[RMDB]
RNA sequence: GGGAACGACUCGAGUAGAGUCGAAAAUCAAACUGGGUAUCUACUGGUUGCUAGCUGGUACGGGCUGGAGUGGAGCUCAGUGGUGCUCACUUGGCUGCACACAGGCCUGAGUCUCCAUCCCUAGCACCCAUGACGCGUGGUUCGCCACGCGUCAUGGAAAAGAAACAACAACAACAAC
Reactivity to DMS in 0.01 (KOAc 150mM, MgCl2 10mM, bicine 150mM(pH8.5), 24C), signal-to-noise 1, nucleotides 027 to 126: u000c090a080a080a100c100u030g000g000g000u010a040u030c110u000a130c090u000g010g020u050u000g020c040u010a030g050c090u020g000g020u010a060c090g000g020g020c010u000g020g040a200g030u010g000g000a050g010c000u000c280a030g000u000g020g010u000g060c220u000c010a040c040u000u000g030g000c000u000g000c000a010c020a030c160a140g000g030c050c010u020g000a080g000u000c100u000c010c020a030u010c100c140c000u000a050g000c030a110c090

Overview
Chemical mapping of a 177-nucleotide RNA with DMS.